RNA sequence: GGGAACGACUCGAGUAGAGUCGAAAAUUGAAUUCUAUUGGAACUCAAACGAUAAGUUCAGGCCCUGCUGUGCCAGGGCAAUCUGACUGCAUUCAUCUUCUUGCCUUGACUUGCUCUGCGCUGGUGCUCGUCACGUGAGAUUCGUCUCACGUGACGAAAAAGAAACAACAACAACAAC
Reactivity to 2A3 in 0.01 (KOAc 150mM, MgCl2 10mM, bicine 150mM(pH8.5), 24C), signal-to-noise 2, nucleotides 027 to 126: u040u060g010a010a000u090u000c030u080a160u120u140g050g020a080a040c020u040c090a100a090a070c070g040a040u040a170a040g020u080u030c020a020g010g030c020c010c000u000g000c070u060g120u250g170c090c010a010g000g020g000c010a000a030u030c010u020g040a060c010u030g000c010a060u020u100c000a080u000c030u030u000c000u050u050g020c030c030u030u060g050a070c020u000u050g000c030u000c040u090g060c050g000c010u010g020g040u030g010c030
Reactivity to DMS in 0.01 (KOAc 150mM, MgCl2 10mM, bicine 150mM(pH8.5), 24C), signal-to-noise 2, nucleotides 027 to 126: u010u000g000a040a000u010u000c110u020a120u010u010g020g010a070a060c080u000c140a060a040a150c150g020a060u000a030a070g020u010u010c000a030g010g010c000c010c000u000g050c030u000g000u010g040c140c010a010g000g010g010c020a000a030u000c050u010g000a060c030u010g000c060a050u000u000c030a060u000c050u000u000c090u000u000g030c040c050u000u020g000a100c100u010u010g000c030u000c020u000g020c100g000c040u000g000g000u000g000c080

An RNA of 177 nucleotides, treated with 2A3 and DMS and read out base by base.
The reactions ran in a buffer of 150 mM KOAc, 10 mM MgCl2 and 150 mM bicine (pH 8.5), at 24 C.
For DMS the reverse transcriptase was MarathonRT.
It was measured as part of the RMDB library OK2TRN.